RNA sequence: GGGAACGACUCGAGUAGAGUCGAAAAGCGAUAGCGUUCGCGCUAUCGCAAAUAAAAUCAGCGGUUUAAAUUUCGAGGCCAUAACCGCUGAUGGCCUCGAAAAAACUCGACAGUUCGCUGUCGAGAAUCAUUGUGUUCAGUUCGCUGAACACAAUGAAAAAGAAACAACAACAACAAC
Reactivity to 2A3 in 0.01 (KOAc 150mM, MgCl2 10mM, bicine 150mM(pH8.5), 24C), signal-to-noise 2, nucleotides 027 to 126: g000c000g030a000u010a010g030c030g010u060u080c230g000c000g000c100u000a000u020c010g000c010a000a000a000u010a000a020a010a070u080c010a000g000c010g080g040u120u120u180a100a180a140u100u180u050c010g000a000g030g000c040c020a010u040a070a060c010c020g000c010u000g000a000u000g000g010c000c000u020c000g000a010a020a020a020a020a000c000u000c000g000a000c000a000g030u060u040c170g070c100u000g000u000c000g000a000g000a000a070
Reactivity to DMS in 0.01 (KOAc 150mM, MgCl2 10mM, bicine 150mM(pH8.5), 24C), signal-to-noise 2, nucleotides 027 to 126: g040c000g000a010u000a000g020c000g000u000u010c260g020c000g010c000u000a000u000c000g020c000a000a080a040u000a030a050a100a040u010c050a030g000c030g000g000u010u000u020a080a070a090u000u010u000c010g000a010g000g010c000c010a040u000a070a060c040c040g000c040u000g000a010u000g000g000c000c000u000c020g010a000a040a050a070a080a070c010u000c010g000a000c000a000g000u000u020c220g020c000u000g000u010c000g000a010g000a050a100
This 177-nucleotide RNA was probed chemically with 2A3 and DMS. For DMS, 1,805 sequencing reads were counted. The reactions ran in a buffer of 150 mM KOAc, 10 mM MgCl2 and 150 mM bicine (pH 8.5), at 24 C. DMS adducts were read by reverse transcription with MarathonRT.